[RMDB]
Structure probing data (DMS and 2A3) for a 177-nucleotide construct. DMS adducts were read by reverse transcription with MarathonRT. 2A3 is a SHAPE reagent: it acylates the 2'-hydroxyl of flexible nucleotides of all four kinds.
RNA sequence: GGGAACGACUCGAGUAGAGUCGAAAAGAUAUGGACGAGCUUUUGACGCUCUUACAUCUCGGAAACGAGAUGGGGAGCGAUAAGCUCAGUCCUAAGUCAAACUUCAGCCAGUUCGCUGGCUGAAGAACUCAUUGUAUUAGUUCGCUAAUACAAUGAGAAAAGAAACAACAACAACAAC
Reactivity to DMS in 0.01 (KOAc 150mM, MgCl2 10mM, bicine 150mM(pH8.5), 24C), signal-to-noise 9, nucleotides 027 to 126: g000a050u000a300u010g000g010a010c010g000a010g010c000u000u000u010u000g020a240c080g010c000u000c000u000u000a110c000a000u000c000u000c000g010g000a110a090a220c000g000a010g000a000u000g000g000g000g000a010g010c000g010a040u000a010a010g000c000u000c000a060g020u000c000c000u000a040a080g000u000c050a100a110a210c010u000u000c000a000g010c000c000a000g010u000u010c280g010c000u000g000g010c000u000g000a000a000g000a060a130
Reactivity to 2A3 in 0.01 (KOAc 150mM, MgCl2 10mM, bicine 150mM(pH8.5), 24C), signal-to-noise 7, nucleotides 027 to 126: g020a030u100a040u160g000g010a000c010g000a000g000c010u070u110u110u230g190a130c030g000c000u000c030u010u020a200c000a000u000c000u000c000g010g010a050a070a040c020g000a000g000a010u000g010g010g010g000a000g000c000g020a010u020a010a000g000c000u000c020a010g000u000c000c000u000a110a030g050u020c050a070a090a110c010u000u000c000a000g000c000c000a020g020u080u090c250g080c140u010g000g000c000u000g000a000a000g000a000a000